[RMDB]
RNA sequence: GGGAACGACUCGAGUAGAGUCGAAAAGUUGUUCUCAGAUGAAGCAGCUGUCCUUCAUCGCACGAGACGGGUAACUCGUGCUGAGAGCAAGUUCAGUGAGCUGAUCAGUUACCCGUCUGAUCAUUCAGAGGACAGCUGCUCUGAAGCUCACUGGUCGCGAUCGUUGUUAGUUCGCUAACAACGAUCGAAAAGAAACAACAACAACAAC
Reactivity to DMS in 0.01 (KOAc 150mM, MgCl2 10mM, bicine 150mM(pH8.5), 24C), signal-to-noise 1, nucleotides 027 to 156: g050u040u000g000u000u000c000u000c010a050g060a150u000g000a100a070g010c000a030g000c000u000g020u000c000c000u050u000c070a180u000c180g020c160a200c130g000a110g030a020c010g070g000g000u000a070a070c000u000c100g050u000g010c000u000g000a000g000a090g000c050a030a090g000u010u000c000a040g030u010g020a000g000c030u000g020a150u000c050a050g000u000u020a050c010c010c040g000u000c010u010g000a050u010c050a190u000u000c070a150g000a040g030g000a130c020a000g000c020u000g000c000u010c010u000g000a100a090g060c000u000c000a010c010u010g000g000u010c060g010
Reactivity to 2A3 in 0.01 (KOAc 150mM, MgCl2 10mM, bicine 150mM(pH8.5), 24C), signal-to-noise 1, nucleotides 027 to 156: g050u000u000g000u030u020c000u000c020a000g020a050u040g020a050a000g000c000a000g000c000u010g000u020c010c010u100u110c030a210u120c080g060c050a090c070g030a020g000a010c010g000g010g000u010a000a010c000u010c050g070u110g070c020u020g010a000g000a000g000c010a050a020g120u180u040c000a000g000u000g000a000g000c000u010g010a050u050c030a000g010u000u000a000c000c000c000g000u010c000u000g010a020u060c110a100u120u200c060a040g000a000g000g000a000c020a000g010c000u000g010c000u030c000u000g000a000a020g000c000u000c000a000c000u000g010g000u060c070g000